[RMDB]
RNA sequence: GGGAACGACUCGAGUAGAGUCGAAAAUUGGACCAGUCCCAACUCUAAAAGUGCUAGAUACAUUAUUACACACUCCUUCUACUAAUUGGCCAGAGUUUUUAGAGAAAAUAGACAGAGAAGGAUUAGAACCGAUGGUGACGUUCGCGUCACCAUCGGUAAAAGAAACAACAACAACAAC
Reactivity to 2A3 in 0.01 (KOAc 150mM, MgCl2 10mM, bicine 150mM(pH8.5), 24C), signal-to-noise 1, nucleotides 027 to 126: u130u040g040g000a000c000c000a000g050u050c000c100c000a000a000c000u000c000u000a000a000a000a000g210u300g040c040u000a060g070a090u110a120c120a090u160u030a040u190u100a190c030a000c000a000c060u010c000c000u000u000c000u100a270c000u040a040a300u070u000g000g000c040c040a000g010a010g090u000u290u000u000u000a070g000a000g000a030a000a000a000u010a000g080a000c050a030g160a000g000a070a030g030g000a000u100u080a060g040a000
Chemical mapping of a 177-nucleotide RNA with 2A3. Conditions: 150 mM KOAc, 10 mM MgCl2 and 150 mM bicine (pH 8.5), 24 C. The data come from the RNA Mapping Database (RMDB), library OK1LIB.